[RMDB]
RNA sequence: GGGAACGACUCGAGUAGAGUCGAAAAGGAUCACGAGGGGGAGACCCCGGCAACCUGGGAUGGACACCCAAGGUGCUCACACCGGAGACGGUGGAUCCGGCCCGAGAGGGCAACGAAGGUCCGAACAACCUACUAUAUCAUUCGUGAUAUAGUAGGUAAAAGAAACAACAACAACAAC
Reactivity to DMS in 0.01 (KOAc 150mM, MgCl2 10mM, bicine 150mM(pH8.5), 24C), signal-to-noise 9, nucleotides 027 to 126: g010g010a010u000c010a150c220g020a130g030g010g020g010g010a230g000a290c000c000c000c010g000g010c020a020a040c010c010u000g000g000g000a060u010g010g000a080c070a200c010c010c010a020a030g000g010u000g000c010u000c100a300c030a030c010c010g010g000a250g010a200c020g020g010u000g000g000a030u000c010c010g010g000c000c000c010g010a180g000a190g010g010g010c010a050a050c160g000a120a090g010g000u000c010c010g010a120a110c200a110
Reactivity to 2A3 in 0.01 (KOAc 150mM, MgCl2 10mM, bicine 150mM(pH8.5), 24C), signal-to-noise 8, nucleotides 027 to 126: g000g000a010u020c020a020c170g090a130g000g010g000g010g000a050g030a040c000c000c000c000g000g000c000a020a040c000c010u000g000g000g020a090u120g050g020a020c020a150c030c010c010a020a040g000g000u010g000c010u030c020a070c000a000c010c000g010g000a040g030a030c010g000g010u010g020g000a010u000c010c010g020g000c010c000c000g000a020g000a010g010g010g000c020a030a010c040g070a140a030g110g000u010c010c010g020a080a030c050a020
The data come from the RNA Mapping Database (RMDB), library OK2TRN. Chemical mapping of a 177-nucleotide RNA with DMS and 2A3. For 2A3 the reverse transcriptase was SuperScript II with manganese. The 2A3 profile rests on 47,531 reads. The DMS profile rests on 37,275 reads.